[RMDB]
Chemical mapping of a 177-nucleotide RNA with 2A3 and DMS.
RNA sequence: GGGAACGACUCGAGUAGAGUCGAAAAAAUGUUCUGUUCGCAGAACAUUAAGCUGGUGACCCGACCAGGCUGGAUGUCAGUACACGAAGUGCCAGAUCGGGAAUGCCUCCGGCUUCGGCCGGAGGAAUCUAUGACGUCGUUUCGACGACGUCAUAGAAAAAGAAACAACAACAACAAC
Reactivity to 2A3 in 0.01 (KOAc 150mM, MgCl2 10mM, bicine 150mM(pH8.5), 24C), signal-to-noise 2, nucleotides 027 to 126: a000a010u000g000u010u000c020u000g020u030u030c240g010c100a000g000a010a010c000a010u000u010a030a020g080c000u000g030g010u010g080a080c000c030c000g020a000c000c000a020g050g040c030u030g030g010a100u130g070u160c070a100g120u250a100c070a030c150g120a210a040g030u030g140c000c030a010g020a040u030c000g000g020g050a010a030u070g050c000c010u000c000c010g000g000c070u020u080c140g120g000c010c000g050g000a000g020g010a000a000
Reactivity to DMS in 0.01 (KOAc 150mM, MgCl2 10mM, bicine 150mM(pH8.5), 24C), signal-to-noise 2, nucleotides 027 to 126: a010a010u000g000u000u000c000u000g010u010u010c210g020c000a000g010a020a010c000a000u000u000a070a120g010c030u010g000g000u000g000a190c000c010c000g010a030c000c000a040g010g010c000u010g000g000a130u000g000u000c070a150g000u010a120c100a110c040g000a070a080g010u020g000c000c030a060g000a160u000c030g010g000g010a100a100u000g010c000c000u000c000c000g010g010c000u000u020c180g030g050c000c000g000g020a010g000g000a000a030

2A3 adducts were read by reverse transcription with SuperScript II with manganese.
The DMS profile rests on 1,445 reads.